[RMDB]
RNA sequence: GGGAACGACUCGAGUAGAGUCGAAAAGGAGAUCGAAGACGACCGACGUCAGCACGGUCGGGAUGUAGGUCCGCAUGCAUCCCAGUUGACGAAACUUCACGAUUUCCAAAGCGGACAAGAAGUCAAAGACCUAAUAAUCGUUCGCGAUUAUUAGGUCAAAAGAAACAACAACAACAAC
Reactivity to DMS in 0.01 (KOAc 150mM, MgCl2 10mM, bicine 150mM(pH8.5), 24C), signal-to-noise 4, nucleotides 027 to 126: g020g000a000g020a020u020c020g000a160a140g010a130c220g000a070c130c020g030a120c080g010u040c150a030g010c050a150c140g000g010u020c070g000g010g000a010u010g020u000a040g000g020u000c000c000g000c000a040u000g000c000a000u000c000c000c060a030g030u000u000g000a090c150g000a130a050a040c030u020u000c020a160c100g010a060u000u020u000c000c000a040a110a180g000c010g000g000a010c030a160a070g000a120a070g010u020c100a040a110a110
Reactivity to 2A3 in 0.01 (KOAc 150mM, MgCl2 10mM, bicine 150mM(pH8.5), 24C), signal-to-noise 4, nucleotides 027 to 126: g020g000a010g000a010u030c020g050a100a030g090a080c090g030a040c030c040g120a110c010g100u080c050a010g050c110a030c080g100g040u100c030g030g000g000a000u000g000u010a000g010g020u000c000c000g010c000a010u000g010c000a000u000c000c000c000a010g000u010u030g010a030c080g040a080a070a070c000u050u040c030a020c130g020a020u000u000u000c000c000a070a050a000g010c000g020g000a000c000a000a040g150a140a030g100u180c080a090a060a030

Chemical mapping of a 177-nucleotide RNA with DMS and 2A3. The data come from the RNA Mapping Database (RMDB), library OK1LIB. Reactivities are rounded to 0.1 and cut off at 0 and 3. Values cover nucleotides 27 to 126. The DMS profile rests on 7,770 reads.